Structure probing data (2A3) for a 207-nucleotide construct.
2A3 adducts were read by reverse transcription with SuperScript II with manganese.
The reactions ran in a buffer of 150 mM KOAc, 10 mM MgCl2 and 150 mM bicine (pH 8.5), at 24 C.
It was measured as part of the RMDB library OK3TST.
RNA sequence: GGGAACGACUCGAGUAGAGUCGAAAACUUGUGCUCGUACGGGAUCAGUUUGUGCGACGACUCCGGCACCAGCGGGGCUACCUUGCCCAGCAGCCGGGACACCAGGAUCGUGUCCAUGCCGGCGUACAGCUCGUAGUCCGGGUCGCCCAGGUCGACCCCUCAUCCCCUGGUUCGCCAGGGGAUGAGGAAAAGAAACAACAACAACAAC
Reactivity to 2A3 in 0.01 (KOAc 150mM, MgCl2 10mM, bicine 150mM(pH8.5), 24C), signal-to-noise 1, nucleotides 027 to 156: c030u070u020g070u070g100c000u060c090g080u100a050c020g020g010g070a070u190c030a080g020u060u300u120g040u020g000c040g000a070c020g010a050c080u000c050c040g000g000c010a030c070c020a040g020c000g000g020g010g000c000u080a140c060c080u180u220g020c000c020c000a020g010c010a020g000c010c000g040g000g000a000c000a000c000c050a080g250g030a120u200c080g010u000g010u000c050c010a060u140g020c010c000g000g000c000g000u020a040c070a010g000c000u010c050g030u030a050g040u070c000c000g020g000g050u030c020g020c000c010c000a000g050g030u100c020g110a170c000c000